[RMDB]
RNA sequence: GGGAACGACUCGAGUAGAGUCGAAAAGCUUCCAGACCGGCCAGCACGUCGCCCGCGCGGAUGUCGUGGCUCAGCUUCAUUGAGCAAAAGGCCGGGCCGCACAUGCUGCAAAAGUGCGCGGUCUUGGCCACUACAUCAGUUUCGACUGAUGUAGUGGAAAAGAAACAACAACAACAAC
Reactivity to DMS in 0.01 (KOAc 150mM, MgCl2 10mM, bicine 150mM(pH8.5), 24C), signal-to-noise 4, nucleotides 027 to 126: g000c110u000u000c020c020a090g000a060c040c020g000g000c110c000a120g000c010a030c030g020u000c130g000c030c040c050g010c180g020c020g000g010a040u000g000u000c100g010u000g000g010c010u000c000a040g000c090u000u010c160a150u000u010g000a080g010c100a080a080a140a100g000g010c000c040g010g010g020c020c010g020c030a010c010a020u010g010c040u000g010c110a070a070a050a140g010u000g010c000g010c020g000g010u000c010u000u010g030g010
Reactivity to 2A3 in 0.01 (KOAc 150mM, MgCl2 10mM, bicine 150mM(pH8.5), 24C), signal-to-noise 4, nucleotides 027 to 126: g030c050u130u000c010c000a030g020a040c010c000g020g140c080c020a090g020c030a020c000g090u090c080g110c010c020c020g070c020g000c030g040g010a030u030g020u070c120g030u040g030g000c000u000c010a010g000c010u090u070c080a190u090u300g100a080g070c050a120a090a020a000g020g000c000c000g000g000g000c010c010g030c000a010c000a020u130g180c020u020g000c050a040a060a030a070g050u050g020c050g000c010g030g000u020c010u030u070g020g020